[RMDB]
RNA sequence: GGGAACGACUCGAGUAGAGUCGAAAAUGGCUACCGUUGAUACCAAUGGUCAGCCCUACCAGCGUAUCGUGCUCUUGAAACAUUAUGAUGAUCAGGGCUUAGUGUUUUACACCAAUUUAGGUAGCCACCGCAGGUGACGAUUCGUCGUCACCUGCGGAAAAGAAACAACAACAACAAC
Reactivity to DMS in 0.01 (KOAc 150mM, MgCl2 10mM, bicine 150mM(pH8.5), 24C), signal-to-noise 2, nucleotides 027 to 126: u000g000g070c000u000a020c000c010g000u010u000g010a060u010a010c100c050a140a110u000g030g000u000c100a110g000c010c000c020u000a030c010c010a060g010c300g000u000a010u030c060g000u010g000c000u000c000u000u040g010a060a080a050c000a030u000u050a040u010g020a300u000g000a060u010c030a020g000g010g020c010u000u000a050g000u000g010u010u000u020u000a040c050a040c010c070a010a080u000u000u010a130g020g020u000a020g000c000c000a030
Reactivity to 2A3 in 0.01 (KOAc 150mM, MgCl2 10mM, bicine 150mM(pH8.5), 24C), signal-to-noise 2, nucleotides 027 to 126: u060g010g000c010u000a000c000c010g030u030u130g020a010u030a020c080c020a070a140u130g010g010u030c020a070g070c000c010c010u020a000c000c000a030g000c010g080u010a010u020c030g040u040g000c000u000c020u030u300g040a030a010a010c030a030u040u140a120u300g210a020u000g000a010u040c000a010g050g000g000c020u030u060a030g030u000g040u070u150u210u230a020c010a000c000c040a050a070u060u090u080a080g000g000u000a000g000c000c010a020